[RMDB]
RNA sequence: GGGAACGACUCGAGUAGAGUCGAAAACCCAAGCUGAGAUGCUUGGAGUGUUCGUACCUGGCGCAAGCCAGGGCAAGUGAGGCGCAAGCCUCGCUGACGGCGUGGAAAGGGCUCUCUCUGAGGCCCGGUGUUGUAGCGAGUUCGCUCGCUACAACACAAAAGAAACAACAACAACAAC
Reactivity to DMS in 0.01 (KOAc 150mM, MgCl2 10mM, bicine 150mM(pH8.5), 24C), signal-to-noise 1, nucleotides 027 to 126: c060c000c000a010a010g000c000u050g000a170g000a110u000g000c000u000u000g000g010a230g020u000g030u010u000c030g010u000a210c000c000u000g020g030c000g000c300a030a170g000c000c000a000g010g000g040c190a070a050g030u000g010a030g010g010c000g020c300a140a120g030c000c000u000c000g010c020u000g000a090c040g010g000c060g010u010g020g010a140a060a170g000g030g010c000u000c020u000c040u010c140u010g010a080g000g010c010c030c030g000
Structure probing data (DMS) for a 177-nucleotide construct. For DMS, 659 sequencing reads were counted. High DMS reactivity at an A or C suggests that its Watson-Crick edge is free. The RNA was probed in 150 mM KOAc, 10 mM MgCl2 and 150 mM bicine (pH 8.5) at 24 C. It was measured as part of the RMDB library RFMREP.